Structure probing data (2A3 and DMS) for a 207-nucleotide construct. For DMS, 2,675 sequencing reads were counted. Values cover nucleotides 27 to 156. The data come from the RNA Mapping Database (RMDB), library OK3TST. Conditions: 150 mM KOAc, 10 mM MgCl2 and 150 mM bicine (pH 8.5), 24 C.
[RMDB]
RNA sequence: GGGAACGACUCGAGUAGAGUCGAAAAUGACUGCACUUCUGAUCAUCAGAGUGGGCUGUGGCCAAACCCAAAACCUUUUUAUGUGUCUAUUGUAUAUCAUGACAAUGAGACCCGAACAGAGAAUAACAUGGAAGUGAUAAUGAUCUAAGAGCUAGCACAGUGCAUACUCAUUCGUGAGUAUGCACUGAAAAGAAACAACAACAACAAC
Reactivity to 2A3 in 0.01 (KOAc 150mM, MgCl2 10mM, bicine 150mM(pH8.5), 24C), signal-to-noise 4, nucleotides 027 to 156: u100g050a040c040u050g020c030a020c040u100u040c020u050g080a120u070c040a040u040c020a080g040a010g080u060g000g050g010c040u050g030u090g110g000c050c000a080a050a060c020c000c020a010a040a050a080c030c000u120u100u050u020u070a130u200g060u000g010u010c000u010a020u060u010g030u030a050u010a050u200c130a110u300g050a030c020a030a010u080g060a020g010a040c000c060c010g020a040a010c050a070g020a000g040a220a090u110a120a030c040a070u070g040g060a050a040g020u020g070a030u060a180a070u080g040a010u020c010u060a040a020g000a000g070c060u100a020g010c090a010
Reactivity to DMS in 0.01 (KOAc 150mM, MgCl2 10mM, bicine 150mM(pH8.5), 24C), signal-to-noise 2, nucleotides 027 to 156: u000g000a090c050u000g030c010a120c030u000u000c040u000g020a150u000c070a110u020c040a080g040a160g060u000g010g030g030c020u000g040u000g010g000c020c040a070a090a140c070c020c010a040a050a090a100c030c010u000u000u000u020u000a070u020g020u010g010u000c010u000a090u000u010g020u000a060u000a140u010c060a100u050g000a050c040a050a070u000g010a110g040a040c000c040c030g020a050a090c070a140g030a150g010a060a120u000a040a120c090a060u000g040g010a060a140g040u000g000a070u000a060a090u000g000a050u000c010u000a070a090g010a090g030c030u010a080g020c070a120